[RMDB]
RNA sequence: GGGAACGACUCGAGUAGAGUCGAAAAGCGUUUAUGAGCUACAUGAACGAAGAGCAUACAUAGUCAAUGUAUGCAGAAGCCUUCUGUAGCUCAGAGGGCAGGACUAAUCUUUGACUAAGAUUAGGGACUAUACCCUGAUGUUCGCAUCAGGGUAUAGAAAAGAAACAACAACAACAAC
Reactivity to DMS in 0.01 (KOAc 150mM, MgCl2 10mM, bicine 150mM(pH8.5), 24C), signal-to-noise 7, nucleotides 027 to 126: g010c050g010u000u000u010a080u010g000a030g010c010u010a010c010a010u010g020a020a020c130g000a030a040g010a300g010c000a000u010a000c000a010u000a150g010u020c300a080a150u000g010u000a000u000g010c000a030g010a160a130g000c030c050u000u000c000u010g010u000a020g000c010u000c000a000g010a070g010g000g010c020a110g010g000a100c000u000a000a000u000c010u000u000u010g010a130c270u010a050a010g000a020u000u000a000g000g010g010a190
Reactivity to 2A3 in 0.01 (KOAc 150mM, MgCl2 10mM, bicine 150mM(pH8.5), 24C), signal-to-noise 4, nucleotides 027 to 126: g020c080g030u040u030u050a240u050g000a010g000c000u010a000c010a040u300g020a040a000c080g020a050a020g020a010g060c010a000u010a010c010a010u080a040g170u220c100a160a080u020g000u010a000u010g000c010a010g050a050a000g020c010c000u010u000c010u000g020u000a000g000c000u000c000a000g000a010g000g050g020c040a030g080g060a020c010u000a010a000u000c020u000u060u140g180a130c090u080a020a010g000a010u010u010a000g020g000g020a020
Source: RMDB library OK2TRN, as collected in RNAgym. The record gives the reactivity of an RNA of 177 nucleotides to DMS and 2A3. Values cover nucleotides 27 to 126. DMS (dimethyl sulfate) methylates the pairing face of unpaired adenines and cytosines. For 2A3, 7,109 sequencing reads were counted. For DMS the reverse transcriptase was MarathonRT. The DMS profile rests on 8,616 reads.